An RNA of 177 nucleotides, treated with 2A3 and DMS and read out base by base. 2A3 adducts were read by reverse transcription with SuperScript II with manganese. Conditions: 150 mM KOAc, 10 mM MgCl2 and 150 mM bicine (pH 8.5), 24 C.

[RMDB]
RNA sequence: GGGAACGACUCGAGUAGAGUCGAAAAGAAUGUAAGCGCGUAAUCGCGCCUUGACGUGAGUGAGACAAGACAGAAGGCUAUCCAAAGUAAGAUAGCAUAGCUCACAAUACGCUGAUCUGUCGUAGAAAUAUUUACUCGCCUUCGGGCGAGUAAAUAUAAAAGAAACAACAACAACAAC
Reactivity to 2A3 in 0.01 (KOAc 150mM, MgCl2 10mM, bicine 150mM(pH8.5), 24C), signal-to-noise 2, nucleotides 027 to 126: g150a020a020u270g000u150a060a010g030c030g020c010g030u150a130a130u300c040g000c000g030c000c040u070u230g030a140c040g000u000g000a000g000u020g060a030g000a000c070a130a000g020a040c040a000g150a130a040g130g030c000u010a000u100c020c010a160a050a110g190u170a300a000g040a010u000a000g010c000a000u000a000g000c000u000c000a070c040a000a000u140a040c120g060c030u040g030a050u000c000u020g070u020c000g010u040a060g100a050a130
Reactivity to DMS in 0.01 (KOAc 150mM, MgCl2 10mM, bicine 150mM(pH8.5), 24C), signal-to-noise 2, nucleotides 027 to 126: g000a110a120u020g000u020a070a130g000c020g000c000g000u030a110a190u010c070g010c000g020c020c030u080u000g000a090c150g010u010g000a070g060u000g010a110g000a160c210a150a030g000a120c120a020g000a020a070g000g000c030u000a000u010c000c080a160a140a110g000u040a070a120g000a010u000a000g000c000a040u010a100g000c000u020c000a060c020a090a150u000a040c120g010c050u010g000a040u000c000u000g000u000c020g050u020a050g000a050a100

High 2A3 reactivity points to a flexible backbone, as in loops and unpaired stretches.